RNA sequence: GGGAACGACUCGAGUAGAGUCGAAAAAGCUUAUUUUAGUAAGAAACAUGUAGAAGUUUUUACUGAUGGUAAGCUUAAUUGUAGUUUCCAGGACGCUGCCUCUAAUAUCUUUGUUAUUAACAAGGACCUAUGACUACAGGUUCGCCUGUAGUCAUAGAAAAGAAACAACAACAACAAC
Reactivity to 2A3 in 0.01 (KOAc 150mM, MgCl2 10mM, bicine 150mM(pH8.5), 24C), signal-to-noise 1, nucleotides 027 to 126: a010g000c030u010u020a020u020u040u010u100a010g020u020a020a070g050a120a050a000c020a020u160g030u270a120g040a300a100g020u010u000u000u000u010a000c000u020g000a020u080g020g010u000a000a020g000c000u000u020a050a000u070u110g070u000a040g020u030u030u020c020c040a020g050g000a010c050g010c090u070g020c000c020u020c010u020a060a120u020a020u070c040u000u040u030g070u010u130a300u090u070a050a010c020a020a000g010g010a000c010
Reactivity to DMS in 0.01 (KOAc 150mM, MgCl2 10mM, bicine 150mM(pH8.5), 24C), signal-to-noise 2, nucleotides 027 to 126: a020g010c010u010u000a020u000u000u000u000a040g010u000a010a030g020a020a000a020c020a060u010g020u010a120g020a160a170g010u000u010u000u000u000a000c010u000g010a040u010g000g000u000a000a010g000c010u000u000a040a150u000u000g010u010a090g000u000u010u000c010c010a100g020g000a090c100g000c050u000g010c030c020u000c050u000a090a080u010a130u000c000u000u010u000g000u000u000a140u010u000a050a040c050a020a030g000g020a080c300